RNA sequence: GGGAACGACUCGAGUAGAGUCGAAAAGAGUAAAAGGGCAAAAGCCUGCUUGAUUCUGAUUUUCAGUACUAAUCGGAACUGGGAAACCAGGGCCUAUCGAUCCUUUAUGUGCUUAAAUCUUAAGCCUCUUCAUACAGCUUUUCGAAGCUGUAUGAAGAAAAGAAACAACAACAACAAC
Reactivity to DMS in 0.01 (KOAc 150mM, MgCl2 10mM, bicine 150mM(pH8.5), 24C), signal-to-noise 2, nucleotides 027 to 126: g000a090g000u010a030a030a050a130g000g000g030c040a100a160a210a150g060c000c000u000g000c150u010u020g000a120u000u000c020u000g030a070u000u000u000u000c030a110g000u000a010c120u010a090a060u000c090g000g000a060a020c000u000g000g020g010a130a130a160c010c100a030g010g000g020c030c030u000a130u010c100g010a090u010c020c000u010u050u010a090u090g030u040g000c040u000u000a050a060a070u020c110u030u000a060a030g010c040c100u000
Reactivity to 2A3 in 0.01 (KOAc 150mM, MgCl2 10mM, bicine 150mM(pH8.5), 24C), signal-to-noise 6, nucleotides 027 to 126: g050a000g040u120a000a020a050a090g020g020g000c090a160a210a070a040g030c020c020u020g000c010u080u060g050a180u110u020c020u060g020a040u030u020u020u090c040a010g020u050a070c050u090a040a060u050c060g010g000a020a010c000u010g000g010g040a080a030a030c020c010a030g020g020g020c000c010u060a090u090c050g070a090u040c000c000u080u150u050a120u180g050u020g000c000u050u040a060a090a080u110c040u030u070a040a010g020c000c010u020

The record gives the reactivity of an RNA of 177 nucleotides to DMS and 2A3.
Values cover nucleotides 27 to 126.
The reactions ran in a buffer of 150 mM KOAc, 10 mM MgCl2 and 150 mM bicine (pH 8.5), at 24 C.
The data come from the RNA Mapping Database (RMDB), libraries RFM100 and RFMREP.